An RNA of 177 nucleotides, treated with DMS and 2A3 and read out base by base. Reactivities are given for positions 27 through 126. It was measured as part of the RMDB libraries RFM100 and RFMREP.
RNA sequence: GGGAACGACUCGAGUAGAGUCGAAAAGCUCUAAUCAUUUUCGUACCAGUGUAUUCCUUCAAACCUCUUCUCUUGACUGUAGUGGUGGCCUGAAGGAGUUCAUUGGUACACAAAUCUUGAGAGCAUGGGUGCUUAAUUUCUUCGGAAAUUAAGCACCAAAAGAAACAACAACAACAAC
Reactivity to DMS in 0.01 (KOAc 150mM, MgCl2 10mM, bicine 150mM(pH8.5), 24C), signal-to-noise 1, nucleotides 027 to 126: g000c000u000c000u000a060a000u040c100a030u020u000u000u010c180g010u000a040c000c010a010g050u000g000u000a070u010u000c000c000u010u000c000a010a120a060c010c000u020c000u000u000c010u000c040u000u000g020a300c080u000g030u030a050g000u020g000g000u000g000g000c120c140u000g000a040a000g000g020a000g010u040u000c000a000u000u000g000g000u000a000c000a080c220a000a010a000u000c070u030u000g050a020g020a000g020c000a130u030g010
Reactivity to 2A3 in 0.01 (KOAc 150mM, MgCl2 10mM, bicine 150mM(pH8.5), 24C), signal-to-noise 7, nucleotides 027 to 126: g000c010u010c010u020a050a110u100c050a040u000u020u020u090c070g010u000a000c000c010a010g000u000g000u030a010u000u000c000c000u010u000c000a030a070a060c010c010u030c010u080u010c020u020c010u080u180g200a260c270u110g160u250a010g010u010g040g010u010g000g050c030c070u020g000a000a000g000g000a000g000u000u000c000a000u000u010g000g000u000a000c010a000c000a000a030a010u000c020u040u130g080a040g000a000g010c010a060u090g130